Record summary
Structure probing data (2A3 and DMS) for a 177-nucleotide construct. The data come from the RNA Mapping Database (RMDB), library TTRDEL. The reactions ran in a buffer of 150 mM KOAc, 10 mM MgCl2 and 150 mM bicine (pH 8.5), at 24 C. The DMS profile rests on 2,256 reads. For 2A3, 2,908 sequencing reads were counted.
[RMDB]
RNA sequence: GGGAACGACUCGAGUAGAGUCGAAAAGAUAUGGACGAGGAGCAUCGAUCUAUCGUAACAUCAGAUCGGAAACGAUCUGUGGAUAGGGAGCUCGCAGUCCUAAGUCAAACUAGUCUUCGGACUAGAACUUACUCCACAACUUCGGUUGUGGAGUAAGAAAAGAAACAACAACAACAAC
Reactivity to 2A3 in 0.01 (KOAc 150mM, MgCl2 10mM, bicine 150mM(pH8.5), 24C), signal-to-noise 2, nucleotides 027 to 126: g040a020u050a020u130g000g000a040c030g020a030g080g020a010g000c040a200u300c080g090a040u040c040u050a030u000c020g140u180a070a030c030a170u290c000a010g000a000u020c000g010g030a050a060a040c020g020a000u010c000u000g000u010g000g000a010u030a020g030g000g040a000g000c010u000c000g000c040a000g000u010c000c000u000a000a000g000u000c010a000a030a070c000u000a000g010u000c020u020u070c300g120g020a010c000u000a010g010a010a010
Reactivity to DMS in 0.01 (KOAc 150mM, MgCl2 10mM, bicine 150mM(pH8.5), 24C), signal-to-noise 3, nucleotides 027 to 126: g010a030u000a300u010g010g010a010c000g020a300g000g000a020g020c000a220u000c160g000a040u010c040u000a030u000c010g020u000a110a240c140a050u010c010a010g010a000u000c000g020g000a040a050a130c010g000a000u000c000u000g020u000g000g000a020u010a030g020g010g000a070g010c010u000c010g000c040a300g010u010c000c000u000a030a110g000u000c020a090a090a190c020u000a010g000u000c010u000u010c260g030g000a000c000u010a010g000a100a150